Chemical mapping of a 177-nucleotide RNA with 2A3. Conditions: 150 mM KOAc, 10 mM MgCl2 and 150 mM bicine (pH 8.5), 24 C. Reactivities are given for positions 27 through 126.
RNA sequence: GGGAACGACUCGAGUAGAGUCGAAAAGGGCGGGGUGGUUGCCGCCAUAAAAAGUGUACAAUAAACGCAAACUAAGUGGCUCACCAGCGGUCGGAGGGGCGGUGGGCGUGGCUCCUUAGGCUCGGGCUCACGGUAGCGGUUUCGACCGCUACCGUGAAAAAGAAACAACAACAACAAC
Reactivity to 2A3 in 0.01 (KOAc 150mM, MgCl2 10mM, bicine 150mM(pH8.5), 24C), signal-to-noise 1, nucleotides 027 to 126: g090g080g000c030g000g000g000g090u080g050g010u100u040g060c000c000g070c020c000a080u240a050a200a000a000a000g050u090g030u050a030c050a050a010u140a160a280a030c150g010c030a030a030a030c130u110a220a000g000u000g050g000c020u030c000a150c020c060a010g050c110g060g010u150c000g080g000a060g030g030g000g000c100g010g050u020g000g000g000c140g170u040g000g000c000u040c000c000u000u070a050g030g000c040u040c000g100g010g000c000

Source: RMDB library OK1LIB, as collected in RNAgym.